[RMDB]
RNA sequence: GGGAACGACUCGAGUAGAGUCGAAAAGCCUUCUUGUAUAAGCACUGUGCUAAAAUUACAGAAACUUUGAUUUCAUCUUGGUUUUUGUAAUAAUGCUAGCAGAGUACACACAAGAAGAAAAGUACUGGUACUAAAUGUUCUUCGGAACAUUUAGUACAAAAGAAACAACAACAACAAC
Reactivity to 2A3 in 0.01 (KOAc 150mM, MgCl2 10mM, bicine 150mM(pH8.5), 24C), signal-to-noise 3, nucleotides 027 to 126: g040c020c000u010u000c000u000u020g040u010a080u040a280a110g050c030a020c010u090g000u010g200c010u040a120a090a070a070u000u010a010c000a000g000a000a000a000c010u050u020u020g020a030u070u300u300c160a060u020c020u010u020g020g000u000u000u000u000u010g020u000a000a010u020a070a050u160g040c050u020a010g000c010a020g010a010g100u060a020c020a000c010a000c000a020a000g000a000a010g010a010a080a000a000g030u040a070c070u090g040
Reactivity to DMS in 0.01 (KOAc 150mM, MgCl2 10mM, bicine 150mM(pH8.5), 24C), signal-to-noise 2, nucleotides 027 to 126: g000c090c000u000u000c010u000u010g000u000a100u020a110a150g000c040a000c010u000g010u000g010c000u000a020a070a090a060u000u000a020c000a010g020a000a010a010c000u010u000u000g000a020u000u000u000c220a090u000c000u000u010g000g000u000u000u000u000u000g010u010a010a010u010a060a120u030g000c300u000a020g020c010a010g000a040g030u000a020c030a130c170a020c000a000a000g000a010a000g000a040a020a080a120g000u000a090c090u000g000